[RMDB]
RNA sequence: GGGAACGACUCGAGUAGAGUCGAAAAAAAGAUAUGGAGAUGGAACUACGAGGAUAAGGUAGUCGAAGAACUAUCUUCGGAAACGAAGAUAGGGAGACUACCGUAACUCGCCAUCUCCUAAGUCAAAUCAUAAUUUAGCGUUCGCGCUAAAUUAUGAAAAAGAAACAACAACAACAAC
Reactivity to 2A3 in 0.01 (KOAc 150mM, MgCl2 10mM, bicine 150mM(pH8.5), 24C), signal-to-noise 2, nucleotides 027 to 126: a020a000a010g060a050u100a060u150g000g000a000g010a000u000g000g020a170a060c140u270a040c300g000a000g070g000a040u000a050a000g010g000u000a000g010u010c010g190a300a040g010a040a040c010u000a010u020c010u010u000c000g020g040a070a030a020c020g000a010a000g000a000u000a000g000g010g000a020g000a000c010u000a000c030c030g010u000a000a000c010u010c010g000c010c000a010u000c000u000c010c000u010a030a000g040u010c030a010a010a120
Reactivity to DMS in 0.01 (KOAc 150mM, MgCl2 10mM, bicine 150mM(pH8.5), 24C), signal-to-noise 2, nucleotides 027 to 126: a070a090a090g010a060u010a300u020g000g000a020g030a010u000g010g010a110a060c100u010a300c040g010a010g000g000a140u010a110a210g000g000u000a000g020u000c000g000a140a190g000a130a170c010u000a000u000c000u000u010c000g000g010a110a040a140c010g000a000a000g000a030u000a000g020g000g010a100g020a000c010u000a010c000c000g000u000a040a160c000u000c010g000c000c010a010u000c000u000c010c000u010a000a060g000u000c040a070a140a240